The record gives the reactivity of an RNA of 177 nucleotides to 2A3 and DMS. In probing experiments dimethyl sulfate is read out at A N1 and C N3, which are open when not base-paired. The 2A3 profile rests on 3,970 reads. The RNA was probed in 150 mM KOAc, 10 mM MgCl2 and 150 mM bicine (pH 8.5) at 24 C. For DMS the reverse transcriptase was MarathonRT.

RNA sequence: GGGAACGACUCGAGUAGAGUCGAAAAAGCGCUAGAUAUGUACAUGGGUGUUCCCCCUUAUCUGUGUACUAUAUCUGUUUGGACCUGGGGGAUAGGGGGAGUAGGGUAGGUUUGGGUGGUGCGCGAAGUGUAUAUUAUAUUUCGAUAUAAUAUACACAAAAGAAACAACAACAACAAC
Reactivity to 2A3 in 0.01 (KOAc 150mM, MgCl2 10mM, bicine 150mM(pH8.5), 24C), signal-to-noise 3, nucleotides 027 to 126: a010g080c070g010c080u040a010g000a010u010a010u020g030u010a000c000a010u010g000g000g000u020g020u070u090c000c000c010c010c000u030u060a020u010c000u010g010u000g000u010a010c040u050a000u000a010u020c040u040g130u050u110u140g080g030a070c010c000u030g000g000g000g000g020a030u050a060g020g000g010g010g010a020g020u060a020g000g000g020u040a010g020g000u060u110u080g020g010g020u070g020g020u040g020c050g000c010g030a110a040
Reactivity to DMS in 0.01 (KOAc 150mM, MgCl2 10mM, bicine 150mM(pH8.5), 24C), signal-to-noise 4, nucleotides 027 to 126: a100g010c060g010c050u020a020g000a020u000a010u000g010u000a010c010a010u000g000g010g010u000g020u020u010c000c000c010c010c020u010u020a020u010c020u000g000u010g000u010a010c020u030a000u000a010u000c020u010g020u010u020u020g000g000a120c070c070u000g000g020g000g000g000a080u020a040g010g000g000g000g000a090g010u020a060g010g000g010u030a080g010g000u010u030u020g010g010g020u030g000g000u010g020c080g010c050g000a050a120